[RMDB]
Chemical mapping of a 177-nucleotide RNA with 2A3.
Values cover nucleotides 27 to 126.
The RNA was probed in 150 mM KOAc, 10 mM MgCl2 and 150 mM bicine (pH 8.5) at 24 C.
The 2A3 profile rests on 588 reads.
As a SHAPE reagent, 2A3 marks flexible, mostly unpaired nucleotides at the ribose 2'-OH.
RNA sequence: GGGAACGACUCGAGUAGAGUCGAAAAGCUCGUCGUGGUCCUCGAGGCGAUGAAGAUGGAGAACCCGGUCACCGCUCACAAAGACGGUGUCAUCACCGGGCUUGCGGUCGAGGCCGGCGCGGCCAUCCGACCGUCCCACCUUCGGGUGGGACGGUCGAAAAGAAACAACAACAACAAC
Reactivity to 2A3 in 0.01 (KOAc 150mM, MgCl2 10mM, bicine 150mM(pH8.5), 24C), signal-to-noise 2, nucleotides 027 to 126: g000c000u000c020g090u030c020g050u120g300g040u200c030c020u000c000g030a000g070g030c080g000a000u240g040a010a140g050a040u160g160g000a070g020a150a000c000c020c000g000g000u000c010a000c020c000g050c070u000c000a080c090a220a170a000g000a110c000g000g000u000g080u120c140a170u250c000a020c000c000g040g010g000c000u030u100g010c000g000g200u060c060g010a000g000g000c000c000g000g000c000g010c010g020g030c000c000a020u000c000